Structure probing data (DMS and 2A3) for a 177-nucleotide construct. The reactions ran in a buffer of 150 mM KOAc, 10 mM MgCl2 and 150 mM bicine (pH 8.5), at 24 C.
RNA sequence: GGGAACGACUCGAGUAGAGUCGAAAAACUAUUUGUUCUAUAGCAAAGAAACCCGAAACACAGGAUAUAUUUGUUAUAUAUGCUUUGUGGCACACAGCUGUUAGGACAUGAGCCAUCAGGGUCCAAAGCAUUAAUAGUACUUCGGUACUAUUAAUGCAAAAGAAACAACAACAACAAC
Reactivity to DMS in 0.01 (KOAc 150mM, MgCl2 10mM, bicine 150mM(pH8.5), 24C), signal-to-noise 5, nucleotides 027 to 126: a110c070u010a030u000u010u000g000u010u000c110u000a060u030a040g020c020a050a080a080g000a100a120a130c070c010c060g000a100a120a080c040a040c060a010g020g000a020u010a000u000a040u000u000u020g000u030u010a060u000a010u000a010u010g010c000u010u010u000g040u000g010g010c070a080c120a050c110a080g010c020u000g000u010u020a060g000g000a040c040a040u030g000a090g000c050c060a060u010c060a080g000g010g030u010c020c030a050a060a110
Reactivity to 2A3 in 0.01 (KOAc 150mM, MgCl2 10mM, bicine 150mM(pH8.5), 24C), signal-to-noise 8, nucleotides 027 to 126: a000c080u090a100u110u050u070g020u020u000c040u050a040u090a060g000c030a070a060a080g060a070a140a050c020c010c020g050a060a100a000c040a000c010a040g010g040a010u010a010u000a010u040u120u140g150u300u020a020u030a010u000a000u060g110c010u050u100u110g020u030g030g000c040a020c000a000c010a070g010c010u040g040u100u050a020g000g020a020c020a060u080g020a010g040c010c000a040u070c060a060g090g020g020u040c010c030a040a030a010

Background
The data come from the RNA Mapping Database (RMDB), library OK1LIB.